[RMDB]
RNA sequence: GGGAACGACUCGAGUAGAGUCGAAAACUGCCCGCCCAGCUGCGGCCUCGCGAGCGAGUGAAUGGCCGAGAGUCCGCGGUGCGUGUCCCGAGGCUGAGAGCCUAUAGUGGCGCGGGAAGGUCGCGGGAGGGCCAAUGGGAGGCGGCGCUGAGCCGUACCUCAGUAGUGCGUUCGCGCACUACUGAGGAAAAGAAACAACAACAACAAC
Reactivity to 2A3 in 0.01 (KOAc 150mM, MgCl2 10mM, bicine 150mM(pH8.5), 24C), signal-to-noise 1, nucleotides 027 to 156: c060u050g070c000c000c020g040c010c000c010a030g040c000u120g000c000g100g000c000c010u000c000g200c010g070a090g120c080g030a020g120u170g130a170a120u090g030g050c020c020g020a010g010a010g110u040c040c020g000c070g000g000u120g030c030g010u030g060u110c010c030c050g010a030g000g000c010u110g130a150g040a060g280c010c010u100a080u070a120g170u230g000g020c000g000c020g050g000g080a070a020g110g000u130c000g000c000g020g000g000a100g000g040g040c010c020a110a090u120g070g050g000a020g050g000c000g080g040c020g000c040u030g020a030g000c060c030g020u090a060

Structure probing data (2A3) for a 207-nucleotide construct. The RNA was probed in 150 mM KOAc, 10 mM MgCl2 and 150 mM bicine (pH 8.5) at 24 C. For 2A3, 571 sequencing reads were counted.